Overview:
The data come from the RNA Mapping Database (RMDB), library OK2TRN. An RNA of 177 nucleotides, treated with DMS and read out base by base. For DMS, 1,041 sequencing reads were counted. For DMS the reverse transcriptase was MarathonRT. Reactivities are given for positions 27 through 126.
RNA sequence: GGGAACGACUCGAGUAGAGUCGAAAAUCGCAUUAGAGUUAAAUUUACUACCCUUUGGAACUGGUAAAAGUAUAUCUAGAUAACUUCUUCUGACUGCAGAUUCUUUCAAAUGUUUUACAUCGGUGAAUGUAGGUAGAAGUUUCGACUUCUACCUACAAAAAGAAACAACAACAACAAC
Reactivity to DMS in 0.01 (KOAc 150mM, MgCl2 10mM, bicine 150mM(pH8.5), 24C), signal-to-noise 2, nucleotides 027 to 126: u020c050g010c090a090u000u000a070g020a080g000u000u010a010a090a110u010u010u010a080c070u000a030c110c020c090u000u010u010g010g000a050a100c240u000g000g000u000a030a050a050a060g020u000a040u010a140u010c080u000a090g020a100u000a120a090c060u000u010c040u010u000c060u000g000a070c060u000g030c070a090g000a090u000u000c060u000u020u000c090a080a030a090u010g000u000u000u020u010a020c090a080u020c050g010g090u020g020a140a100